[RMDB]
RNA sequence: GGGAACGACUCGAGUAGAGUCGAAAAGAUAUGGAACAGAAAUCCUCUAAGCGACGAAGUCGGAAACGACAGAGCUUAGGGAGGGAUAAUGUUCCUAAGUCAAAAGUAGAAAGUUCGCUUUCUACAACUUGUACUUCAACUUCGGUUGAAGUACAAGAAAAGAAACAACAACAACAAC
Reactivity to DMS in 0.01 (KOAc 150mM, MgCl2 10mM, bicine 150mM(pH8.5), 24C), signal-to-noise 2, nucleotides 027 to 126: g010a040u020a300u000g000g000a000a010c010a040g000a090a050a090u010c000c000u000c000u010a010a000g010c010g010a100c230g010a060a090g000u000c000g000g000a060a100a180c020g020a000c000a080g000a190g010c000u010u000a000g000g000g040a080g000g010g000a030u000a040a180u000g000u000u000c000c000u020a070a100g010u000c030a120a050a080a160g000u000a010g000a020a010a010g000u000u020c200g000c000u000u000u000c000u010a000c010a060a090
Reactivity to 2A3 in 0.01 (KOAc 150mM, MgCl2 10mM, bicine 150mM(pH8.5), 24C), signal-to-noise 1, nucleotides 027 to 126: g000a010u070a050u160g000g000a000a010c000a000g060a070a300a020u040c010c090u090c010u070a030a000g000c030g300a300c070g080a230a010g000u000c010g040g000a130a050a060c010g020a000c030a020g020a000g020c000u020u030a000g050g100g150a160g010g030g010a000u020a050a040u000g000u000u000c000c000u000a070a010g020u040c030a030a060a100a100g000u000a010g010a000a000a010g000u100u130c240g000c130u000u030u000c000u000a000c000a020a020